This 177-nucleotide RNA was probed chemically with 2A3 and DMS. For DMS, 2,324 sequencing reads were counted. In probing experiments dimethyl sulfate is read out at A N1 and C N3, which are open when not base-paired. DMS adducts were read by reverse transcription with MarathonRT. The RNA was probed in 150 mM KOAc, 10 mM MgCl2 and 150 mM bicine (pH 8.5) at 24 C.

[RMDB]
RNA sequence: GGGAACGACUCGAGUAGAGUCGAAAAUGACAGAUGGUGCCAGAGGGUCCUCCAUCAAGUCUGUACCCAUUGGCAGCCUUUGUCCCACCAGACAUGGAUGAGAGGGCCGGUUCUCCCCACCCCAUGGGUAUGCCUUCAAGUUCGCUUGAAGGCAUACAAAAGAAACAACAACAACAAC
Reactivity to 2A3 in 0.01 (KOAc 150mM, MgCl2 10mM, bicine 150mM(pH8.5), 24C), signal-to-noise 2, nucleotides 027 to 126: u110g020a030c030a010g100a050u100g050g050u030g020c040c000a020g070a110g210g000g030u030c010c000u000c000c020a040u030c010a030a030g000u000c000u000g120u150a100c000c000c010a040u070u100g010g010c030a040g120c010c040u070u120u080g040u010c000c020c030a010c030c000a000g030a030c020a080u220g140g000a020u030g020a060g000a010g210g010g030c000c000g000g030u080u030c040u010c000c010c000c010a060c020c010c000c000a010u040g080g110
Reactivity to DMS in 0.01 (KOAc 150mM, MgCl2 10mM, bicine 150mM(pH8.5), 24C), signal-to-noise 3, nucleotides 027 to 126: u000g000a090c080a060g000a090u000g020g030u000g000c010c040a130g030a140g000g020g000u000c010c010u000c000c000a010u000c030a070a080g010u000c020u000g020u010a200c080c030c050a110u010u000g020g030c030a060g020c020c060u000u010u010g010u020c010c050c020a170c280c020a030g000a060c050a100u000g000g010a040u010g010a170g010a050g000g000g000c020c020g010g000u000u010c020u000c010c010c000c020a170c040c010c000c040a120u020g010g010